An RNA of 177 nucleotides, treated with 2A3 and DMS and read out base by base. Source: RMDB library TTRDEL, as collected in RNAgym. 2A3 adducts were read by reverse transcription with SuperScript II with manganese. DMS adducts were read by reverse transcription with MarathonRT. For DMS, 7,987 sequencing reads were counted.

RNA sequence: GGGAACGACUCGAGUAGAGUCGAAAAGAUAUGGAGGUAGAGCGAUAAGCUGUUGGGAUCGGAAACGAUCCCACCAGCUUUUGACGCUCAAACUCCUAAGUCAAACGAGCAGGUUCGCCUGCUCGAACGUUUUAGGUAAGUUCGCUUACCUAAAACGAAAAGAAACAACAACAACAAC
Reactivity to 2A3 in 0.01 (KOAc 150mM, MgCl2 10mM, bicine 150mM(pH8.5), 24C), signal-to-noise 3, nucleotides 027 to 126: g040a030u060a060u200g010g010a010g010g030u160a030g020a000g000c020g010a030u010a060a020g010c000u000g030u020u010g020g000g000a000u000c020g030g010a050a080a040c010g010a010u010c010c010c010a000c000c000a000g000c000u010u000u010u040g020a010c010g000c000u000c000a070a020a010c000u000c000c000u010a070a000g040u020c020a040a060a090c000g000a000g010c000a000g030g030u110u180c240g100c080c000u000g000c010u000c000g000a000a000
Reactivity to DMS in 0.01 (KOAc 150mM, MgCl2 10mM, bicine 150mM(pH8.5), 24C), signal-to-noise 6, nucleotides 027 to 126: g010a040u000a300u000g010g000a020g020g010u000a260g020a010g010c000g020a170u000a020a010g010c010u000g010u000u000g010g000g010a010u000c000g010g010a090a090a160c010g010a020u000c000c000c010a000c030c000a010g000c000u000u000u010u000g010a170c050g000c000u010c010a020a090a280c000u000c000c000u000a060a110g010u000c030a080a110a260c010g000a010g000c000a020g000g010u000u010c230g000c000c000u000g010c000u000c000g000a020a080